[RMDB]
The record gives the reactivity of an RNA of 177 nucleotides to 2A3 and DMS. For DMS, 5,670 sequencing reads were counted.
RNA sequence: GGGAACGACUCGAGUAGAGUCGAAAAGUGCGUCACGUCUAACGGCUACCGUGGAGCUUGCCGCCAGUCCAGGCAGACUCGAAUGCCGCACGGUGCUUGGGAAUAAGAUCUUCCGCACAUCGAUAACUCCCGUAUAGGUAUUCGUACCUAUACGGGAAAAAGAAACAACAACAACAAC
Reactivity to 2A3 in 0.01 (KOAc 150mM, MgCl2 10mM, bicine 150mM(pH8.5), 24C), signal-to-noise 3, nucleotides 027 to 126: g020u020g010c010g010u030c040a010c090g030u000c060u060a150a030c020g030g040c050u090a050c010c010g040u040g060g020a040g000c020u040u020g010c040c010g000c030c050a060g050u040c060c000a010g040g000c030a010g000a040c020u000c040g100a130a030u080g020c040c000g060c020a000c000g000g000u010g000c010u090u190g120g020g060a150a110u170a200a030g030a040u050c040u110u030c050c000g050c010a010c000a040u150c090g060a030u050a140a090c040
Reactivity to DMS in 0.01 (KOAc 150mM, MgCl2 10mM, bicine 150mM(pH8.5), 24C), signal-to-noise 5, nucleotides 027 to 126: g010u010g000c020g020u010c090a060c300g010u000c020u010a090a130c070g000g000c020u010a050c030c020g010u000g010g010a050g000c010u000u010g000c020c010g010c080c090a120g010u000c070c090a150g030g000c010a020g000a040c010u000c030g020a090a070u000g000c040c050g010c030a030c030g000g010u000g000c020u000u000g020g000g020a080a110u000a090a090g000a070u000c120u010u000c120c020g010c030a030c030a100u010c080g000a130u010a080a150c190